Background
Conditions: 150 mM KOAc, 10 mM MgCl2 and 150 mM bicine (pH 8.5), 24 C. The record gives the reactivity of an RNA of 177 nucleotides to DMS and 2A3. For DMS, 881 sequencing reads were counted. For 2A3, 906 sequencing reads were counted. Reactivities are given for positions 27 through 126.

[RMDB]
RNA sequence: GGGAACGACUCGAGUAGAGUCGAAAACUAAUGCCGGCGAAGGUACCAACGGUUCCCAGUUCUUCCUUAACUACAAGGAUUCUCCGCUACCUCCCGCAUACACGUACUUUGGAAAAAUCUCUGACGCGUGUAUGCAACACUUCGGUGUUGCAUACACAAAAGAAACAACAACAACAAC
Reactivity to DMS in 0.01 (KOAc 150mM, MgCl2 10mM, bicine 150mM(pH8.5), 24C), signal-to-noise 2, nucleotides 027 to 126: c110u030a120a130u010g030c020c040g010g020c120g020a090a090g000g000u000a060c080c040a060a130c050g010g010u000u000c040c000c040a090g000u000u010c100u000u000c030c000u000u000a040a090c190u000a130c210a020a040g000g010a090u010u000c050u000c010c040g050c100u020a090c020c020u000c000c030c050g020c050a030u000a040c070a020c020g010u010a070c110u000u000u000g010g000a050a110a110a140a110u000c040u000c020u010g000a080c300g020c080
Reactivity to 2A3 in 0.01 (KOAc 150mM, MgCl2 10mM, bicine 150mM(pH8.5), 24C), signal-to-noise 1, nucleotides 027 to 126: c030u100a200a110u100g060c030c040g010g000c060g060a040a020g060g040u100a100c000c080a080a020c030g010g000u030u000c010c010c010a000g060u080u050c000u060u030c000c000u070u080a170a110c060u090a030c110a090a030g000g000a080u020u050c070u050c060c010g050c020u030a040c000c030u050c040c010c010g030c020a050u100a060c020a000c050g030u030a060c100u000u000u110g020g010a050a080a000a090a200u090c090u000c010u030g020a030c030g030c010